RNA sequence: GGGAACGACUCGAGUAGAGUCGAAAACGAUCAGUACGUUCGCGUACUGAUCGAAGCUACUGGAGACAGUAGCAAGUCUAAGACCUUGUUAGGGGGAAACAAGGAAAAAUGGAGGAAGGGCGGACCUCCAUACUUAGACAACCCCCAACCGUCCAAACUAAAUUUACGCUUUCGAGCGUAAAUUUAGAAAAGAAACAACAACAACAAC
Reactivity to 2A3 in 0.01 (KOAc 150mM, MgCl2 10mM, bicine 150mM(pH8.5), 24C), signal-to-noise 2, nucleotides 027 to 156: c010g000a000u000c000a010g000u010a020c020g020u030u090c260g000c000g110u010a000c000u010g000a000u010c000g000a000a000g000c000u000a000c000u000g010g010a070g010a050c000a000g000u000a000g010c000a010a010g000u000c000u000a010a050g010a230c000c000u020u020g040u060u160a300g000g000g010g010g000a030a020a000c010a010a000g030g000a050a090a040a030a040u040g000g000a010g010g030a070a230g020g000g000c020g030g020a200c000c000u000c000c000a010u020a020c000u000u000a000g000a010c010a020a140c030c020c010c000c030a010a020c000c000g010u010c000c010a030a020a010